[RMDB]
RNA sequence: GGGAACGACUCGAGUAGAGUCGAAAAGGCGGCGACGCCGAGUUCACGGGCGAUGGUCGAUACGUCGACGGGUGCUGUGGUUGCGUUCAGCUCGGCCAGGCCCAGUAGUUGCUGUACCCGCAGCGCGAAUGUGUUUCUUCUUCGGAAGAAACACAUUAAAAGAAACAACAACAACAAC
Reactivity to 2A3 in 0.01 (KOAc 150mM, MgCl2 10mM, bicine 150mM(pH8.5), 24C), signal-to-noise 2, nucleotides 027 to 126: g050g000c020g030g010c060g050a060c010g020c000c000g000a000g080u110u130c040a020c080g000g010g000c060g220a300u030g020g000u010c000g010a000u030a170c160g080u120c050g110a030c070g050g060g000u110g050c030u030g060u100g060g070u130u160g020c050g020u040u050c050a030g040c020u010c000g000g000c010c020a050g030g000c000c010c020a010g010u040a000g010u000u280g030c020u040g010u000a070c000c000c000g020c000a000g030c030g000c020g100
Reactivity to DMS in 0.01 (KOAc 150mM, MgCl2 10mM, bicine 150mM(pH8.5), 24C), signal-to-noise 3, nucleotides 027 to 126: g020g010c010g000g010c260g000a190c060g030c010c010g010a090g020u000u000c040a080c100g000g020g010c000g010a170u010g010g010u000c050g000a040u000a070c110g010u000c100g010a070c030g010g000g000u000g020c040u010g010u000g010g010u010u000g010c080g000u010u000c090a120g010c080u000c010g010g000c010c030a060g000g010c000c000c000a120g020u000a040g020u010u010g000c000u000g000u000a110c040c010c000g000c010a010g010c000g010c170g000